RNA sequence: GGGAACGACUCGAGUAGAGUCGAAAAGCCGUAAGCUUCGGCUUACGGCAAAGCUGACCAGCUAUGAGGUCAUACAUCGUCAUAGCACAAUAAUAAAAAUAAAAAGUGCUGUCUUCGGACAGCACAACUUUAGUGUAACGUUCGCGUUACACUAAAGAAAAGAAACAACAACAACAAC
Reactivity to 2A3 in 0.01 (KOAc 150mM, MgCl2 10mM, bicine 150mM(pH8.5), 24C), signal-to-noise 5, nucleotides 027 to 126: g000c000c000g000u010a000a000g010c000u030u190c270g070g010c000u030u000a000c000g000g010c000a010a030a000g030c020u020g000a000c010c000a000g010c010u000a010u000g000a000g000g010u010c010a020u160a160c080a130u140c150g050u000c010a000u020a000g070c000a010c030a010a040u300a090a050u190a050a060a040a030a010u210a060a080a020a020a020g010u000g000c000u000g010u000c010u020u110c270g070g000a000c000a000g010c010a000c000a000a000
Reactivity to DMS in 0.01 (KOAc 150mM, MgCl2 10mM, bicine 150mM(pH8.5), 24C), signal-to-noise 3, nucleotides 027 to 126: g010c010c000g000u000a000a030g000c010u000u010c200g040g010c010u020u000a010c000g010g010c000a010a020a080g020c220u010g000a030c000c000a190g000c020u000a000u000g010a020g000g000u000c020a070u000a130c240a030u000c190g000u000c000a000u010a010g000c010a160c150a060a050u020a100a080u040a000a050a080a060a080u000a050a100a060a070a130g020u000g000c010u000g000u010c000u000u010c170g010g020a010c000a000g000c000a010c000a000a030